The record gives the reactivity of an RNA of 207 nucleotides to 2A3 and DMS. The DMS profile rests on 5,556 reads. 2A3 adducts were read by reverse transcription with SuperScript II with manganese. The 2A3 profile rests on 3,439 reads. The reactions ran in a buffer of 150 mM KOAc, 10 mM MgCl2 and 150 mM bicine (pH 8.5), at 24 C. The data come from the RNA Mapping Database (RMDB), library M2RFPK.

RNA sequence: GGGAACGACUCGAGUAGAGUCGAAAAACAUAGGCCAUGCUUACGAGCAUGGCCUUUGACGAAUCUCAAGCAAUCAAGCAUUCUACUUCUAUUGCAACACUGAGGAGCUUACGAGCUCCUCAGUGAAAAAAGAGAGUAAUGUUCGCAUUACUCUCAACUUAAUACCAUUGUUCGCAAUGGUAUUAAGAAAAGAAACAACAACAACAAC
Reactivity to 2A3 in 0.01 (KOAc 150mM, MgCl2 10mM, bicine 150mM(pH8.5), 24C), signal-to-noise 4, nucleotides 027 to 156: a000c010a010u050a000g000g000c000c000a000u000g000c000u150u070a130c300g080a020g010c000a010u010g000g000c000c000u000u000u000g000a000c000g040a040a050u010c010u030c050a050a050g000c000a020a020u090c030a090a010g040c020a170u160u050c040u120a100c030u060u060c030u070a050u040u050g020c030a080a030c000a050c010u000g010a000g000g000a000g000c010u100u080a080c210g040a000g000c000u000c000c000u000c000a000g000u000g010a000a000a000a000a000a000g000a000g000a010g000u000a000a010u000g030u040u070c150g000c080a000u000u000a000c000u000c000u000c000a010a000
Reactivity to DMS in 0.01 (KOAc 150mM, MgCl2 10mM, bicine 150mM(pH8.5), 24C), signal-to-noise 3, nucleotides 027 to 156: a120c000a010u000a020g020g010c000c000a030u000g030c010u000u000a110c280g020a090g040c000a010u000g010g000c000c000u000u000u000g010a140c080g010a140a110u010c030u000c030a080a110g010c050a050a080u010c170a070a100g030c070a100u000u000c080u000a020c020u000u010c120u000a100u000u000g000c010a140a200c020a020c010u000g000a020g030g000a030g020c000u000u000a110c280g030a090g040c000u000c000c010u000c000a000g000u000g000a000a020a050a070a120a060g010a030g010a020g020u000a010a010u000g010u000u010c300g020c010a030u000u000a010c000u010c000u000c000a000a040